Conditions: 150 mM KOAc, 10 mM MgCl2 and 150 mM bicine (pH 8.5), 24 C. Structure probing data (DMS and 2A3) for a 177-nucleotide construct. Reactivities are given for positions 27 through 126. 2A3 adducts were read by reverse transcription with SuperScript II with manganese. The DMS profile rests on 10,118 reads. Source: RMDB library OK2TRN, as collected in RNAgym.

RNA sequence: GGGAACGACUCGAGUAGAGUCGAAAAAGAUUGAAGUUAGACUUGCUUGGUUCAGAGACCAGGCCAGGAUCGAGCAUUUGCCAUUGGUGACCUGGAGGUGUCUGGAGCAGGAUCCUUUUAAAUAGGCGAAAUACAAUUAUUUCGAUAAUUGUAUUUCAAAAGAAACAACAACAACAAC
Reactivity to DMS in 0.01 (KOAc 150mM, MgCl2 10mM, bicine 150mM(pH8.5), 24C), signal-to-noise 6, nucleotides 027 to 126: a070g010a160u000u010g010a070a130g010u000u000a110g010a200c030u000u000g000c010u000u000g010g000u000u000c040a070g000a080g010a030c010c010a080g010g020c010c020a020g000g000a100u000c050g010a120g030c020a280u010u010u010g020c040c050a190u000u000g000g020u000g010a060c020c010u000g000g010a110g020g030u000g000u000c010u000g010g000a030g000c020a020g010g000a050u000c020c010u000u010u010u010a020a060a130u010a070g010g010c300
Reactivity to 2A3 in 0.01 (KOAc 150mM, MgCl2 10mM, bicine 150mM(pH8.5), 24C), signal-to-noise 6, nucleotides 027 to 126: a000g100a080u140u190g060a110a030g080u060u140a060g050a090c010u030u030g020c010u030u030g040g100u300u050c020a020g020a000g020a040c010c000a040g060g230c000c000a010g000g070a160u040c050g030a030g020c030a060u120u140u300g020c050c040a090u050u170g080g020u110g080a120c010c010u010g010g020a020g040g000u030g070u030c030u020g040g000a020g000c000a010g000g050a050u050c010c030u060u120u100u190a120a180a080u160a080g060g030c080